[RMDB]
Conditions: 150 mM KOAc, 10 mM MgCl2 and 150 mM bicine (pH 8.5), 24 C.
This 177-nucleotide RNA was probed chemically with DMS and 2A3.
Values cover nucleotides 27 to 126.
For DMS, 2,063 sequencing reads were counted.
Source: RMDB library OK2TRN, as collected in RNAgym.
RNA sequence: GGGAACGACUCGAGUAGAGUCGAAAACUACGCCGCGGACAACGUGUUCGAGACCUCGGCGGUCGUGAACAAAGAGACCUCGAUGGGCAUCGACGGCAAGUUCUCGGCCGGCUUCGUCUACAACGAGAGUAACAACAGACUUCGGUCUGUUGUUACUAAAAGAAACAACAACAACAAC
Reactivity to DMS in 0.01 (KOAc 150mM, MgCl2 10mM, bicine 150mM(pH8.5), 24C), signal-to-noise 3, nucleotides 027 to 126: c050u020a090c120g070c010c030g050c070g010g010a060c070a140a080c100g020u000g000u000u010c060g000a100g010a050c020c010u000c100g030g010c140g030g000u000c000g010u000g000a050a070c100a080a080a120g010a190g000a110c020c020u000c000g000a020u010g020g020g010c080a150u010c010g010a040c070g010g010c040a100a150g010u000u000c020u000c030g010g000c000c050g020g030c120u000u000c070g000u000c020u010a090c100a040a070c060g000a100g000
Reactivity to 2A3 in 0.01 (KOAc 150mM, MgCl2 10mM, bicine 150mM(pH8.5), 24C), signal-to-noise 2, nucleotides 027 to 126: c010u150a080c050g000c010c020g070c040g040g000a020c010a120a020c150g070u030g080u190u030c030g020a020g010a030c000c000u010c010g040g050c030g030g000u010c030g000u040g110a110a030c030a070a200a050g130a040g050a090c000c000u000c020g050a090u160g020g210g050c100a080u000c000g040a040c050g010g000c020a030a010g020u040u050c010u000c030g010g000c010c010g060g010c040u080u050c010g020u000c010u050a060c010a120a010c070g050a030g000